[RMDB]
RNA sequence: GGGAACGACUCGAGUAGAGUCGAAAACCUCUCGAGAAUCGGCAAAUGGGCCCCUCGCUCGUAUCUCCGAGAGGAGACGAGAAGGAGGCGGAUCUCCCUUUGCCAUCCGAGGGGACUGCGUCCUCCUGGUAAUGAUGUAGUUCGCUACAUCAUUACCAAAAGAAACAACAACAACAAC
Reactivity to 2A3 in 0.01 (KOAc 150mM, MgCl2 10mM, bicine 150mM(pH8.5), 24C), signal-to-noise 4, nucleotides 027 to 126: c010c010u000c000u000c010g300a300g030a210a130u180c180g000g000c000a010a030a090u120g030g030g020c010c000c010c000u000c000g040c000u010c000g060u090a170u040c010u000c000c000g030a030g000a020g070g000a000g000a000c010g000a010g010a040a070g220g010a000g010g030c140g030g010a040u030c110u110c070c000c010u000u000u000g000c000c000a000u010c000c010g000a010g000g000g000g010a040c060u130g050c060g050u020c000c010u050c010c050u040
Reactivity to DMS in 0.01 (KOAc 150mM, MgCl2 10mM, bicine 150mM(pH8.5), 24C), signal-to-noise 1, nucleotides 027 to 126: c020c000u010c010u020c020g020a120g010a100a000u010c190g040g010c020a000a010a030u000g010g010g010c030c000c000c000u000c000g010c010u000c000g010u020a120u000c000u010c010c010g020a270g000a260g000g000a000g010a050c000g000a010g000a030a060g010g040a000g010g000c170g010g030a210u020c110u030c020c000c010u000u000u000g000c000c000a020u000c000c000g000a010g000g000g000g010a000c080u010g000c190g010u000c000c020u000c160c100u000
Structure probing data (2A3 and DMS) for a 177-nucleotide construct. For DMS the reverse transcriptase was MarathonRT.